[RMDB]
RNA sequence: GGGAACGACUCGAGUAGAGUCGAAAAGGCCACGGACGUGGAAGCGCUUCAUGACGAUCGACUUGCCCACAUAGGCUUCGGCGACGAUCAGGGCAUCGACGUCGAGAUCGUGAUUGUUUUCAGCGUAGCGCCAUUUUACGUUCGCGUAAAAUGGCGCAAAAGAAACAACAACAACAAC
Reactivity to DMS in 0.01 (KOAc 150mM, MgCl2 10mM, bicine 150mM(pH8.5), 24C), signal-to-noise 2, nucleotides 027 to 126: g010g010c020c020a050c100g000g000a080c110g040u010g000g010a100a140g000c050g030c110u000u000c070a070u000g000a030c020g000a060u000c000g020a040c090u000u000g000c000c010c030a170c250a110u010a060g020g000c030u000u010c050g010g000c060g010a110c050g020a020u000c070a230g010g000g020c090a060u000c050g010a110c040g020u010c010g000a040g010a030u000c020g000u000g030a090u000u000g000u000u000u000u010c060a100g000c080g010u000a090
Reactivity to 2A3 in 0.01 (KOAc 150mM, MgCl2 10mM, bicine 150mM(pH8.5), 24C), signal-to-noise 1, nucleotides 027 to 126: g050g040c020c000a000c020g090g010a060c060g030u000g030g010a070a030g030c010g020c020u000u070c030a040u150g040a000c030g220a240u010c000g040a080c110u080u130g000c010c040c030a090c000a140u170a040g030g000c000u020u010c040g020g010c020g000a070c030g000a030u020c060a120g120g080g000c040a000u000c020g030a050c010g010u000c000g000a000g000a020u090c040g030u020g010a100u030u080g020u080u020u030u130c020a010g000c050g090u040a040